[RMDB]
RNA sequence: GGGAACGACUCGAGUAGAGUCGAAAAUGGAUCUCCUCGAGAGCCGCUGUCCGGUUAUCGUCGACGACCUCGACAGUGAUCUGGGAUCGAUCGCCAUCUCUCGAGAUAGCUCGCGCUGCACUCCGGACGAUAGAGCAAGGUUCGCCUUGCUCUAUCGAAAAGAAACAACAACAACAAC
Reactivity to 2A3 in 0.01 (KOAc 150mM, MgCl2 10mM, bicine 150mM(pH8.5), 24C), signal-to-noise 3, nucleotides 027 to 126: u100g070g010a030u020c010u010c050c000u020c020g090a070g000a020g080c080c020g000c060u030g030u020c000c000g000g000u030u020a100u120c100g070u030c060g030a050c060g020a020c020c000u030c030g010a000c020a050g020u040g050a090u010c070u130g050g020g030a050u110c060g060a110u100c030g030c030c010a110u050c020u030c000u010c010g000a010g000a040u080a020g010c030u030c040g050c010g030c040u040g010c030a030c070u000c000c000g020g020a020
Reactivity to DMS in 0.01 (KOAc 150mM, MgCl2 10mM, bicine 150mM(pH8.5), 24C), signal-to-noise 4, nucleotides 027 to 126: u010g020g000a090u010c030u000c080c040u010c040g000a040g000a060g010c300c120g000c050u000g010u000c020c080g030g000u010u010a060u000c050g000u010c120g010a040c100g000a090c200c030u010c050g010a020c020a060g010u010g000a060u000c030u000g030g000g010a070u020c080g010a070u000c090g010c040c040a130u010c030u000c020u010c030g020a040g000a130u000a040g000c080u000c060g010c100g010c040u000g010c030a090c080u000c020c020g010g020a300

Source: RMDB library OK2TST, as collected in RNAgym.
The record gives the reactivity of an RNA of 177 nucleotides to 2A3 and DMS.
The reactions ran in a buffer of 150 mM KOAc, 10 mM MgCl2 and 150 mM bicine (pH 8.5), at 24 C.
2A3 adducts were read by reverse transcription with SuperScript II with manganese.
The DMS profile rests on 4,007 reads.